[RMDB]
RNA sequence: GGGAACGACUCGAGUAGAGUCGAAAAGCGGAAACGAGUGCGUGGUAGCACAAACCAAACCAAUCCGCGGCACAAGGUCGCACAUGCACAGCUUCGCCUGUGCAAAGCGAACAAGGCGAACAAAGAAGCAGGUAGUAUGAUUCGUCAUACUACCUGCAAAAGAAACAACAACAACAAC
Reactivity to DMS in 0.01 (KOAc 150mM, MgCl2 10mM, bicine 150mM(pH8.5), 24C), signal-to-noise 4, nucleotides 027 to 126: g000c000g000g000a040a040a170c180g020a180g020u000g020c120g020u000g000g000u060a080g000c030a020c130a090a210a110c130c140a120a100a140c080c060a200a130u000c050c010g010c020g000g010c060a050c100a040a300g000g000u010c010g000c010a080c160a290u000g010c000a010c000a000g020c000u060u070c270g010c210c000u020g010u000g000c000a020a110a070g000c000g000a000a020c070a110a080g000g000c050g000a040a080c170a030a040a130g010a100a130
Reactivity to 2A3 in 0.01 (KOAc 150mM, MgCl2 10mM, bicine 150mM(pH8.5), 24C), signal-to-noise 4, nucleotides 027 to 126: g000c020g000g020a070a090a050c120g010a110g050u010g000c090g030u080g100g090u140a040g060c010a030c020a140a090a010c040c040a030a020a030c020c010a010a000u000c000c000g000c010g070g010c030a050c020a280a020g090g020u000c010g010c010a020c010a170u050g000c000a000c000a010g000c000u200u270c140g010c050c000u010g000u000g000c010a020a020a000g000c000g000a060a020c030a010a010g050g000c030g030a030a040c110a100a120a030g120a090a050